[RMDB]
Chemical mapping of a 207-nucleotide RNA with DMS and 2A3. Reactivities are rounded to 0.1 and cut off at 0 and 3. For DMS the reverse transcriptase was MarathonRT. The RNA was probed in 150 mM KOAc, 10 mM MgCl2 and 150 mM bicine (pH 8.5) at 24 C. For DMS, 5,048 sequencing reads were counted.
RNA sequence: GGGAACGACUCGAGUAGAGUCGAAAACAAUUUGAGCAGCGCCUCGAUAACCCCGAAGUUUUUAAAGAAGCACAUCAGGGUAAAGGUCUUAAAGUGCUGAUUUUUACUUAUCAACCAAGCUAACAAUGUCACUGGCUUUAGGGUUAUCUUUGUGGGCGAUGCCCUGUAAAUUCGUUUACAGGGCAUCAAAAGAAACAACAACAACAAC
Reactivity to DMS in 0.01 (KOAc 150mM, MgCl2 10mM, bicine 150mM(pH8.5), 24C), signal-to-noise 3, nucleotides 027 to 156: c010a150a180u000u000u000g010a110g010c030a200g010c030g030c050c000u000c040g010a060u000a020a030c000c010c000c010g020a040a110g000u000u000u000u000u000a150a090a150g000a170a100g020c080a040c030a090u010c060a120g000g000g010u000a050a070a050g000g040u000c020u000u000a070a050a170g010u010g030c060u000g010a030u000u000u000u000u000a040c050u000u020a110u000c080a080a130c100c080a100a130g010c040u000a060a080c070a070a050u000g010u010c040a230c050u000g000g020c000u000u000u000a040g010g010g010u000u010a010u000c010u000u000u000g010u010g000g020g020c040
Reactivity to 2A3 in 0.01 (KOAc 150mM, MgCl2 10mM, bicine 150mM(pH8.5), 24C), signal-to-noise 4, nucleotides 027 to 156: c020a050a090u120u170u290g050a060g040c050a020g100c040g040c050c010u030c030g000a000u000a000a010c000c010c010c030g020a010a010g010u020u070u060u070u200a090a100a030g040a050a020g020c040a020c010a080u150c070a050g030g000g040u090a170a110a020g060g020u040c020u070u120a140a130a030g060u050g020c010u000g040a020u020u010u040u020u020a040c020u070u090a080u260c020a050a050c080c030a090a010g030c020u050a030a100c050a210a110u120g050u110c030a030c120u030g000g000c000u010u020u050a030g000g000g000u000u000a000u000c020u020u140u100g110u040g010g000g020c010